[RMDB]
RNA sequence: GGGAACGACUCGAGUAGAGUCGAAAAGGUGGCUCCUGGAGGCGUCUCCCUACACGCGUAGGGGAGUCACCGAUUUAGCAUGUUCGUCCUACUUCAGGGGCGUCUGCGCUGUAGGACGUUCAUGCGAGGGUAGCUUUACCUUCGGGUAGAGCUACCCAAAAGAAACAACAACAACAAC
Reactivity to DMS in 0.01 (KOAc 150mM, MgCl2 10mM, bicine 150mM(pH8.5), 24C), signal-to-noise 5, nucleotides 027 to 126: g000g030u000g010g010c000u000c000c010u000g000g030a150g000g000c020g010u000c080u030c030c020c030u000a080c270a030c020g010c020g010u030a250g000g000g000g000a010g020u000c000a010c010c000g030a030u020u020u020a100g000c010a000u000g000u000u000c000g010u000c000c000u000a010c000u020u020c060a110g000g000g010g020c070g010u020c040u020g000c110g000c020u010g000u000a010g000g010a010c000g010u000u000c000a010u000g010c010g000a100
Reactivity to 2A3 in 0.01 (KOAc 150mM, MgCl2 10mM, bicine 150mM(pH8.5), 24C), signal-to-noise 9, nucleotides 027 to 126: g000g000u010g000g010c000u010c000c010u080g130g110a120g150g040c010g010u020c080u090c050c010c010u080a050c060a000c020g070c030g110u170a110g010g050g000g000a000g000u000c000a000c000c000g000a000u010u020u050a020g000c000a000u000g000u000u000c000g000u000c000c000u000a020c010u090u090c060a080g020g050g060g050c050g090u060c060u100g070c090g020c050u040g000u000a000g000g000a000c000g000u000u000c000a000u000g000c000g000a060